[RMDB]
RNA sequence: GGGAACGACUCGAGUAGAGUCGAAAAGAUAUGGAAUAGUCCUUGCUGCGACGAAGACCCUUCGGAAACGAAGGGUCAGAGCAGGAGGAGCUAUUCCUAAGUCAAAAUCCUCUGUUCGCAGAGGAAACAGUAUUGUAUGCUUCGGCAUACAAUACUGAAAAGAAACAACAACAACAAC
Reactivity to 2A3 in 0.01 (KOAc 150mM, MgCl2 10mM, bicine 150mM(pH8.5), 24C), signal-to-noise 3, nucleotides 027 to 126: g020a030u080a080u160g000g010a010a000u010a000g020u010c020c000u120u120g300c020u030g010c020g300a300c050g000a300a030g000a010c000c000c000u000u000c000g040g010a050a110a080c000g000a020a010g030g010g000u010c000a000g000a010g000c000a000g000g040a010g030g000a090g070c000u020a000u010u000c000c000u020a090a010g080u010c030a060a030a020a300u020c010c000u000c020u000g060u060u090c300g000c150a000g000a010g020g000a020a040a020
Reactivity to DMS in 0.01 (KOAc 150mM, MgCl2 10mM, bicine 150mM(pH8.5), 24C), signal-to-noise 3, nucleotides 027 to 126: g010a040u010a300u000g000g000a010a000u000a000g010u000c010c000u000u010g010c010u000g010c000g000a210c220g000a110a110g000a000c010c000c000u010u010c000g030g000a120a100a180c020g020a010a010g010g010g000u000c000a000g000a080g020c010a030g000g000a010g000g010a050g000c010u000a010u010u000c000c000u000a020a130g000u010c030a120a110a140a160u000c000c000u010c000u000g010u010u010c270g040c010a010g000a030g000g000a020a060a150